The record gives the reactivity of an RNA of 207 nucleotides to 2A3 and DMS. Reactivities are given for positions 27 through 156. The RNA was probed in 150 mM KOAc, 10 mM MgCl2 and 150 mM bicine (pH 8.5) at 24 C.

[RMDB]
RNA sequence: GGGAACGACUCGAGUAGAGUCGAAAACUGUGUGCGUGUGUGAGCAUGCCUUUACACUCAGCCAGGCAGUUGUCAACUCUGCCUUAGUGUCUGUGCAGAGAUGAGGUCAGCCAGAGAGUUUAGGGCUUUAUCGGUUUUCCUGAGCAUGACACAGCUAAUAAUUAGCCGUAUUCGUACGGCUAAUUAUAAAAGAAACAACAACAACAAC
Reactivity to 2A3 in 0.01 (KOAc 150mM, MgCl2 10mM, bicine 150mM(pH8.5), 24C), signal-to-noise 4, nucleotides 027 to 156: c010u010g010u010g010u120g150c020g020u040g010u020g010u030g070a060g050c080a100u110g000c000c010u060u200u070a040c040a010c020u030c020a040g090c070c010a060g040g000c010a030g020u130u120g190u120c020a030a030c040u010c000u030g000c010c000u010u080a130g030u070g040u080c100u070g120u100g030c010a000g020a000g000a020u060g010a000g010g070u040c020a020g000c010c010a050g030a000g010a010g060u040u040u120a070g020g010g020c010u040u120u080a080u060c020g010g030u040u040u090u180c020c020u060g010a020g010c020a020u030g010a010c000a000c000a020g030c030u040a080
Reactivity to DMS in 0.01 (KOAc 150mM, MgCl2 10mM, bicine 150mM(pH8.5), 24C), signal-to-noise 3, nucleotides 027 to 156: c020u000g030u000g020u000g040c050g020u000g020u000g010u010g000a160g020c060a120u000g000c040c060u010u000u010a070c080a060c070u000c010a140g020c040c040a120g020g030c010a070g050u000u000g000u000c040a070a090c040u000c010u000g010c020c040u000u010a080g040u000g010u000c010u000g020u000g020c010a030g010a060g030a180u000g000a130g020g020u000c070a070g120c010c010a140g010a150g010a100g030u000u000u000a090g010g010g010c020u000u020u010a040u010c000g010g010u000u000u000u000c050c000u000g010a170g000c030a070u000g000a130c000a050c000a130g020c060u000a140